[RMDB]
RNA sequence: GGGAACGACUCGAGUAGAGUCGAAAACGUCAUCGCCACCAGUUUGCGGCACAGCUCAAUGGCUGGCGCAUGGGUGAUACCGCCAAACAUCACAUGCGACAUGGCAUCAAUUUGCGACUUCAUCGCCCCUUCAGUGUCAGUUCGCUGACACUGAAGGAAAAGAAACAACAACAACAAC
Reactivity to DMS in 0.01 (KOAc 150mM, MgCl2 10mM, bicine 150mM(pH8.5), 24C), signal-to-noise 3, nucleotides 027 to 126: c110g010u000c090a040u000c120g030c000c020a070c060c030a080g000u020u000u000g010c200g010g050c090a100c110a120g020c010u000c080a050a130u010g000g040c100u000g010g010c040g010c040a030u000g000g020g020u000g000a130u000a130c030c040g040c070c040a080a130a130c040a030u000c060a180c030a040u000g000c030g000a070c140a070u000g000g020c010a110u030c130a050a090u000u000u000g000c000g000a040c070u000u000c060a100u010c050g000c010c140
Reactivity to 2A3 in 0.01 (KOAc 150mM, MgCl2 10mM, bicine 150mM(pH8.5), 24C), signal-to-noise 3, nucleotides 027 to 126: c020g010u040c030a080u070c060g020c000c010a000c000c000a040g050u030u080u070g070c000g060g020c060a030c040a260g000c050u080c180a070a110u080g020g000c020u010g030g000c020g000c010a030u040g030g000g000u010g000a040u080a110c010c050g040c020c050a110a090a030c020a020u020c020a020c000a180u030g000c020g010a070c040a180u080g030g000c030a030u040c050a090a160u090u070u110g030c030g030a020c040u080u020c070a110u060c070g020c010c000
Structure probing data (DMS and 2A3) for a 177-nucleotide construct. Conditions: 150 mM KOAc, 10 mM MgCl2 and 150 mM bicine (pH 8.5), 24 C. Reactivities are rounded to 0.1 and cut off at 0 and 3. The DMS profile rests on 1,789 reads. The data come from the RNA Mapping Database (RMDB), library OK2TST. For 2A3, 3,490 sequencing reads were counted.